Source information: The record gives the reactivity of an RNA of 207 nucleotides to DMS and 2A3. DMS adducts were read by reverse transcription with MarathonRT. For DMS, 4,779 sequencing reads were counted. It was measured as part of the RMDB library ARCHII.
[RMDB]
RNA sequence: GGGAACGACUCGAGUAGAGUCGAAAAGACUGGCUGGGAUAACGCCCAGCUGUAACCAAGUGGAGUCGUUAAAGGUUUAGGAUGGGAUACUGUGUCACUACAUCCCGGAAGUAACAUUGCACGAUGGCUGCCCAUUACAAGGCUGCAGUCUCUAGAGCGUAGGAUAUGUCUUCGGACAUAUCCUACGAAAAGAAACAACAACAACAAC
Reactivity to DMS in 0.01 (KOAc 150mM, MgCl2 10mM, bicine 150mM(pH8.5), 24C), signal-to-noise 3, nucleotides 027 to 156: g010a110c030u010g010g000c000u010g000g020g000a110u020a110a140c200g040c010c000c000a050g010c000u000g020u000a040a080c000c000a090a190g020u000g030g010a040g030u000c060g000u000u000a060a110a070g020g040u000u000u000a080g010g000a050u000g020g010g020a130u000a110c070u010g000u000g040u020c070a060c040u010a060c030a090u010c010c010c010g000g000a080a070g000u010a030a050c050a130u000u000g000c070a070c100g030a130u010g020g010c000u000g030c050c010c020a090u000u010a120c150a110a080g010g010c020u000g000c020a120g030u010c010u040c020u000a080g000a300g040
Reactivity to 2A3 in 0.01 (KOAc 150mM, MgCl2 10mM, bicine 150mM(pH8.5), 24C), signal-to-noise 3, nucleotides 027 to 156: g050a010c060u050g000g020c010u000g030g000g000a070u040a170a030c040g120c030c010c000a020g000c000u000g000u010a030a000c000c030a150a030g050u100g070g040a040g010u010c010g000u070u060a030a090a070g110g020u040u130u180a030g000g030a050u070g090g000g000a040u060a170c050u070g020u030g070u150c030a020c080u130a050c020a050u020c000c000c000g000g030a110a010g020u040a040a040c070a120u090u290g040c070a020c090g100a050u110g000g000c020u010g030c040c030c000a020u070u130a130c090a160a090g010g010c150u080g060c000a000g030u020c020u040c060u100a040g050a040g090